The record gives the reactivity of an RNA of 177 nucleotides to 2A3 and DMS. Values cover nucleotides 27 to 126. Conditions: 150 mM KOAc, 10 mM MgCl2 and 150 mM bicine (pH 8.5), 24 C. In probing experiments dimethyl sulfate is read out at A N1 and C N3, which are open when not base-paired. For DMS the reverse transcriptase was MarathonRT.
RNA sequence: GGGAACGACUCGAGUAGAGUCGAAAAGGACCCAGCUUCGGCUGGGUCCAAAGAGAUAGUACCUAUUGAGUUCCUGUGUAGGUACUCAUGUCAGGAUGUCAAAAAGUAUGGACUUCGGUCCAUACAACUUCGGUAGUAACUUCGGUUACUACCGAAGAAAAGAAACAACAACAACAAC
Reactivity to 2A3 in 0.01 (KOAc 150mM, MgCl2 10mM, bicine 150mM(pH8.5), 24C), signal-to-noise 1, nucleotides 027 to 126: g000g040a000c000c020c000a010g040c000u010u040c160g150g000c000u000g000g000g000u000c000c010a000a000a000g000a000g010a020u040a080g050u000a090c010c010u070a070u040u090g050a070g020u000u030c000c000u060g040u070g060u140a000g000g010u020a000c000u010c010a060u080g060u060c020a010g100g130a170u110g060u140c090a000a030a010a090a270g000u010a010u020g000g000a000c050u030u060c260g040g000u080c000c000a000u020a000c000a000a010
Reactivity to DMS in 0.01 (KOAc 150mM, MgCl2 10mM, bicine 150mM(pH8.5), 24C), signal-to-noise 2, nucleotides 027 to 126: g020g010a000c000c000c000a020g010c030u010u010c240g010g020c000u000g030g000g040u000c000c000a020a030a060g000a170g000a050u000a040g010u000a040c010c000u000a020u000u000g000a070g010u000u000c000c000u010g010u000g010u000a000g010g010u000a010c010u000c080a040u000g010u000c080a080g010g020a100u000g000u040c100a080a080a080a100a090g000u000a010u000g020g000a020c000u000u020c150g080g000u000c010c000a000u000a000c000a050a100